[RMDB]
RNA sequence: GGGAACGACUCGAGUAGAGUCGAAAAUCGGUAUGGAUGAAGAACAGGGACUCAUUUUCUAUCGUUUAGUUAUUCCCUGCUUAAAAGGUGAAAUUAACGAAACAUUAUUACGUGUAUAUAUCGACACGCUACUAACGCGUUUCGACGCGUUAGUAGCAAAAGAAACAACAACAACAAC
Reactivity to 2A3 in 0.01 (KOAc 150mM, MgCl2 10mM, bicine 150mM(pH8.5), 24C), signal-to-noise 2, nucleotides 027 to 126: u090c040g000g000u040a030u070g000g050a040u040g040a030a030g030a060a030c030a050g030g000g070a050c010u010c020a050u070u010u110u070c080u030a080u090c060g000u000u020u070a050g010u000u020a010u070u000c000c000c010u050g020c050u080u120a050a060a060a080g030g000u060g070a030a100a120u120u090a050a030c040g050a090a060a000c010a070u080u160a090u190u170a130c060g030u010g020u010a030u000a030u000a050u280c000g010a010c000a000c090
Reactivity to DMS in 0.01 (KOAc 150mM, MgCl2 10mM, bicine 150mM(pH8.5), 24C), signal-to-noise 2, nucleotides 027 to 126: u010c030g000g000u000a020u000g000g010a040u000g000a060a090g030a050a040c160a040g000g000g000a090c120u010c060a030u000u000u000u000c070u010a080u010c150g010u010u010u020a110g000u000u010a100u000u000c000c000c020u010g030c180u000u000a040a040a040a060g000g000u000g000a050a060a030u000u000a020a040c040g010a070a050a080c080a130u030u000a110u000u000a100c130g000u000g000u010a050u010a130u010a060u000c130g000a040c050a010c020

This 177-nucleotide RNA was probed chemically with 2A3 and DMS. Reactivities are given for positions 27 through 126. Conditions: 150 mM KOAc, 10 mM MgCl2 and 150 mM bicine (pH 8.5), 24 C. Source: RMDB library OK2TST, as collected in RNAgym.